[RMDB]
RNA sequence: GGGAACGACUCGAGUAGAGUCGAAAAAUACUGUCAAGGAAACUAGCCAACAGUGUUGGAGGUGCUAGAAACCAACAGUUAAGGUACAGCCAGUGAAGUCAGAGCCCUGGAAAGCUUCCAUAUGGAAGAAGGAACAGUCAUUUCCAUGUGUCCUGAAUAAUUUAGCUAGUUUCGACUAGCUAAAUUAAAAAGAAACAACAACAACAAC
Reactivity to DMS in 0.01 (KOAc 150mM, MgCl2 10mM, bicine 150mM(pH8.5), 24C), signal-to-noise 4, nucleotides 027 to 156: a110u010a060c030u000g000u010c030a110a100g020g020a140a120a180c040u000a080g030c030c020a080a070c040a130g020u000g030u010u000g010g010a100g030g010u000g000c010u000a050g030a080a090a220c040c010a090a050c030a080g000u000u000a060a080g000g020u000a090c090a070g020c040c020a100g000u000g000a080a100g010u000c040a070g010a130g010c030c020c030u000g000g010a050a060a110g010c010u010u000c010c000a180u010a110u010g020g010a040a050g000a080a100g020g000a060a090c050a060g010u010c040a090u000u000u000c010c010a100u000g000u000g010u000c020c010u000g010a130a210
Reactivity to 2A3 in 0.01 (KOAc 150mM, MgCl2 10mM, bicine 150mM(pH8.5), 24C), signal-to-noise 4, nucleotides 027 to 156: a000u090a000c010u010g020u040c060a100a070g010g010a150a120a080c020u030a010g000c030c020a050a040c050a230g100u080g060u220u080g020g050a090g030g030u170g020c020u020a020g010a150a070a010c020c000a000a010c010a010g020u050u060a050a040g010g000u080a070c020a030g050c040c010a020g010u040g120a070a010g020u050c010a020g020a010g060c000c000c040u010g010g000a070a060a040g030c000u020u000c010c010a080u060a060u300g030g020a020a030g030a040a040g060g010a050a060c040a040g060u060c040a110u030u040u030c020c030a030u040g020u000g010u020c000c010u030g040a090a090
This 207-nucleotide RNA was probed chemically with DMS and 2A3. For 2A3, 3,141 sequencing reads were counted. Source: RMDB library OK3TST, as collected in RNAgym. The RNA was probed in 150 mM KOAc, 10 mM MgCl2 and 150 mM bicine (pH 8.5) at 24 C. The DMS profile rests on 10,327 reads.